An RNA of 177 nucleotides, treated with 2A3 and DMS and read out base by base. Values cover nucleotides 27 to 126. DMS adducts were read by reverse transcription with MarathonRT. For DMS, 21,275 sequencing reads were counted. Source: RMDB library OK1LIB, as collected in RNAgym. The RNA was probed in 150 mM KOAc, 10 mM MgCl2 and 150 mM bicine (pH 8.5) at 24 C.
RNA sequence: GGGAACGACUCGAGUAGAGUCGAAAAAUGAGUUGGACACCGGCUGCGUGCGAGACGAUUCCCCCGUGUGUGCAACUUUUACACGCCCACGUUGUGUCCCCGUUGACAGUCGGCUCUUCGAACGCUGACUCAUAUGGUAGUUCGCUACCAUAUGAGUAAAAGAAACAACAACAACAAC
Reactivity to 2A3 in 0.01 (KOAc 150mM, MgCl2 10mM, bicine 150mM(pH8.5), 24C), signal-to-noise 9, nucleotides 027 to 126: a000u160g010a030g010u050u030g050g040a000c010a010c020c010g030g020c070u120g020c030g040u080g030c040g040a050g040a060c070g070a140u050u070c000c000c000c010c000g040u040g000u000g010u040g180c020a040a010c000u050u030u030u080a090c130a020c040g030c000c010c000a030c050g060u070u080g030u020g030u070c010c000c000c010g040u040u110g050a060c040a020g020u030c000g020g010c010u020c000u070u050c020g050a070a030c050g000c070u050g020
Reactivity to DMS in 0.01 (KOAc 150mM, MgCl2 10mM, bicine 150mM(pH8.5), 24C), signal-to-noise 2, nucleotides 027 to 126: a060u020g000a060g000u010u000g000g000a060c040a030c030c040g010g010c150u010g000c030g020u000g010c060g010a120g010a130c070g010a170u000u000c000c000c030c040c010g010u020g010u000g010u010g000c020a030a030c060u020u000u020u030a090c130a090c130g000c010c010c020a080c140g010u000u010g000u010g000u000c010c010c000c050g020u010u030g010a080c140a060g000u000c020g000g000c030u010c030u000u010c070g000a060a070c110g000c010u000g000